[RMDB]
RNA sequence: GGGAACGACUCGAGUAGAGUCGAAAAUUUGAUUGGUCAGGAUCCAUCGCGCAUCAAUGACUUAUGGCAAGUGAUGUAUCGCGCCGGAUUUUAUCGUGGCGGUCCGAUCCUGAUGAGCGCCAUUGCCUGCAUGGUGUGUUUUCGAACACACCAUGCAAAAAGAAACAACAACAACAAC
Reactivity to 2A3 in 0.01 (KOAc 150mM, MgCl2 10mM, bicine 150mM(pH8.5), 24C), signal-to-noise 1, nucleotides 027 to 126: u040u030u210g070a070u050u270g110g040u000c020a000g000g020a000u010c000c020a050u070c060g000c040g000c010a050u040c020a110a110u050g080a100c000u040u160a200u110g060g010c090a070a060g080u040g050a040u030g070u040a070u250c040g000c010g000c050c030g020g000a020u060u030u040u150a140u130c070g040u080g050g000c020g020g020u010c000c070g000a000u040c000c030u020g020a060u040g040a010g050c040g000c020c020a010u020u050g020c000c030
Reactivity to DMS in 0.01 (KOAc 150mM, MgCl2 10mM, bicine 150mM(pH8.5), 24C), signal-to-noise 2, nucleotides 027 to 126: u000u000u010g000a100u010u010g010g000u000c010a040g030g010a040u000c020c080a090u010c060g050c270g000c030a050u000c030a070a090u000g000a040c010u010u000a080u020g000g020c100a080a100g010u000g000a030u000g020u010a090u010c080g000c070g010c100c060g010g000a020u000u000u000u000a070u010c100g010u010g020g010c020g000g070u000c060c090g010a020u010c030c020u000g010a040u000g010a100g030c060g010c010c040a040u000u010g000c160c060